The record gives the reactivity of an RNA of 177 nucleotides to DMS and 2A3. DMS (dimethyl sulfate) methylates the pairing face of unpaired adenines and cytosines. The DMS profile rests on 3,065 reads. It was measured as part of the RMDB library OK1LIB. The RNA was probed in 150 mM KOAc, 10 mM MgCl2 and 150 mM bicine (pH 8.5) at 24 C.
RNA sequence: GGGAACGACUCGAGUAGAGUCGAAAAUUCUUCCGUGGUCAGGUGGAUAAAUACACCUGGCGGGAUAUCGGCUCCAGUUAUUUGAUGUCCGAUCUGCAGGCUGCCUAUCUGUGGGCGCAACUGGAGGCAGGACCAUCAUGUUCGCAUGAUGGUCCUGAAAAGAAACAACAACAACAAC
Reactivity to DMS in 0.01 (KOAc 150mM, MgCl2 10mM, bicine 150mM(pH8.5), 24C), signal-to-noise 2, nucleotides 027 to 126: u000u020c070u000u010c000c000g020u020g000g000u000c000a010g050g000u000g020g020a070u040a050a150a100u160a100c010a040c000c010u000g000g000c000g020g000g040a050u020a050u000c100g000g050c000u000c000c040a030g010u000u000a090u010u030u000g000a120u000g000u010c080c040g010a090u040c060u020g080c050a020g000g000c120u040g020c060c050u030a120u040c140u020g000u010g010g000g010c050g010c070a010a060c010u000g000g000a010g000g000
Reactivity to 2A3 in 0.01 (KOAc 150mM, MgCl2 10mM, bicine 150mM(pH8.5), 24C), signal-to-noise 4, nucleotides 027 to 126: u030u020c010u110u050c010c030g150u110g090g040u040c000a000g020g020u020g010g070a130u080a270a190a000u270a080c000a000c000c000u000g000g020c040g000g010g010a020u090a050u030c030g010g050c010u000c000c010a010g010u010u070a300u200u220u150g160a190u080g060u020c070c030g040a140u000c030u190g030c000a020g010g120c040u140g040c030c040u240a200u120c010u110g070u140g040g000g000c000g000c010a010a020c010u010g010g000a000g040g000